[RMDB]
RNA sequence: GGGAACGACUCGAGUAGAGUCGAAAAGGGUCGAUCGAAGAGACCAUCAAGCGCAUCGUCGAUGCGAUCGUCUCGGGCAUCGUCGGGGUCACCGGCAUCGGUGCGGGGAUCUCGGAUCUCCAGUCGCUGAUCGAGCAGAUCUCCUCGGCGGCUGCCCGAUUGCUACGUAGUUCGCUACGUAGCAAUCAAAAGAAACAACAACAACAAC
Reactivity to DMS in 0.01 (KOAc 150mM, MgCl2 10mM, bicine 150mM(pH8.5), 24C), signal-to-noise 1, nucleotides 027 to 156: g030g030g020u000c000g020a060u000c020g010a090a140g000a190g020a030c030c050a200u000c140a170a070g020c100g010c090a080u020c030g030u010c050g000a080u000g010c020g010a060u000c010g000u000c040u000c000g000g030g020c010a030u000c020g050u010c010g010g020g010g030u000c030a030c010c000g000g020c040a300u010c020g040g000u000g040c060g000g000g040g010a030u000c000u000c120g030g010a020u000c020u000c000c000a100g040u000c050g010c060u000g000a030u000c030g030a130g010c020a080g000a110u010c010u000c000c000u010c000g010g060c000g000g000c170u000g000c010c000c000
Reactivity to 2A3 in 0.01 (KOAc 150mM, MgCl2 10mM, bicine 150mM(pH8.5), 24C), signal-to-noise 2, nucleotides 027 to 156: g040g010g000u010c010g010a010u010c010g020a020a010g060a020g010a080c050c030a030u130c100a180a180g160c070g050c140a040u020c010g120u020c040g020a020u070g080c000g010a010u020c010g050u000c000u030c020g000g000g000c010a010u020c000g000u000c000g000g010g020g030u020c030a010c090c000g110g030c080a050u080c040g080g000u040g020c030g000g000g000g020a020u040c200u160c200g160g050a030u000c000u000c010c010a070g200u260c010g010c020u020g010a050u060c050g040a040g030c120a050g050a080u050c040u020c040c000u010c000g000g000c000g000g000c080u000g000c000c000c020